[RMDB]
RNA sequence: GGGAACGACUCGAGUAGAGUCGAAAAGUGAGGCUGACAUCGCCGAUGCAACUGAUGGCCGGCACAUCGACCCUUUCAUACAUGGAUAGAUGCAGGAGAUUGGUGACCAUCUGCAAUUGUCGGCGCAAGCUCCUGCUGAGUUCGCUCAGCAGGAGCUAAAAGAAACAACAACAACAAC
Reactivity to DMS in 0.01 (KOAc 150mM, MgCl2 10mM, bicine 150mM(pH8.5), 24C), signal-to-noise 2, nucleotides 027 to 126: g000u000g000a110g050g020c020u000g010a080c020a040u000c050g020c000c070g010a000u000g030c060a300a050c020u000g030a010u000g000g030c010c000g010g050c080a200c050a090u000c010g000a110c110c000c040u000u000u010c210a060u010a110c300a090u000g000g000a040u010a080g000a020u000g010c080a060g000g010a090g010a100u000u010g000g010u000g000a150c300c000a010u000c030u000g000c030a060a050u000u020g010u000c020g040g020c010g020c030a070
Reactivity to 2A3 in 0.01 (KOAc 150mM, MgCl2 10mM, bicine 150mM(pH8.5), 24C), signal-to-noise 1, nucleotides 027 to 126: g090u110g050a030g090g110c020u010g010a010c020a020u080c040g020c040c030g000a010u010g000c010a080a000c000u000g030a020u020g270g020c000c000g040g000c070a010c010a100u010c010g090a120c000c000c000u080u110u150c200a180u210a170c010a020u110g050g000a020u080a170g000a040u030g000c040a040g000g020a070g000a030u030u040g020g030u000g030a010c010c000a000u000c020u000g050c000a000a210u170u170g010u000c030g000g000c000g000c080a020